Structure probing data (2A3 and DMS) for a 177-nucleotide construct. For 2A3 the reverse transcriptase was SuperScript II with manganese.
RNA sequence: GGGAACGACUCGAGUAGAGUCGAAAAAGCUUGUCAUGGCGCUACGUGCGAUAGCCGAUGACAUUGAGGCCCGGGGGACUGACGUAGUGGGGAAGUGGACCCUUUGAGCGCUAUGGACGCGGCAACCACUGAAUGGGUGUUUCGACACCCAUUCAGUAAAAGAAACAACAACAACAAC
Reactivity to 2A3 in 0.01 (KOAc 150mM, MgCl2 10mM, bicine 150mM(pH8.5), 24C), signal-to-noise 2, nucleotides 027 to 126: a000g020c050u060u030g000u010c020a030u070g080g000c070g120c020u010a060c070g210u210g260c090g140a090u070a020g000c040c000g150a060u040g000a020c060a090u030u150g040a070g000g070c000c000c070g010g000g000g020g020a020c020u030g020a030c040g010u040a020g050u160g030g040g070g010a050a040g070u140g010g080a090c020c000c000u020u090u050g080a070g000c050g000c030u040a050u120g050g030a000c020g020c020g020g030c000a000a010c030c030
Reactivity to DMS in 0.01 (KOAc 150mM, MgCl2 10mM, bicine 150mM(pH8.5), 24C), signal-to-noise 2, nucleotides 027 to 126: a070g010c050u000u020g020u000c000a000u000g010g020c140g040c030u000a040c080g010u010g000c100g000a120u010a080g000c030c020g020a080u020g010a070c010a060u010u010g010a160g000g010c020c010c050g010g000g010g000g010a170c060u000g010a070c070g010u010a020g050u000g000g000g000g000a110a100g030u010g000g000a140c030c020c070u000u000u000g000a070g010c040g030c030u000a070u010g000g000a100c130g050c060g010g010c080a080a100c060c060